[RMDB]
RNA sequence: GGGAACGACUCGAGUAGAGUCGAAAAAUGUUGGUGGUGGAUUCCAGGGUGUACAAAUUACAUCUGGUUUCUUCCAACUUUGGCGUGCUAGUGGUAUUACUAGUGAAUUACAGCUUUACAGUACCGCCGUUGAGGUAGUUUUCGAACUACCUCAACGAAAAGAAACAACAACAACAAC
Reactivity to DMS in 0.01 (KOAc 150mM, MgCl2 10mM, bicine 150mM(pH8.5), 24C), signal-to-noise 2, nucleotides 027 to 126: a070u010g010u010u000g000g020u000g010g060u000g000g000a010u000u000c000c000a040g020g010g040u000g030u010a060c210a090a100a120u010u000a020c010a000u000c010u000g000g000u000u000u000c010u000u000c000c000a030a050c020u000u000u000g010g020c080g010u000g010c020u000a030g020u000g010g020u010a080u000u010a070c030u000a040g010u010g020a080a080u000u000a090c140a110g000c070u000u000u000a070c120a060g000u000a090c090c040g000c130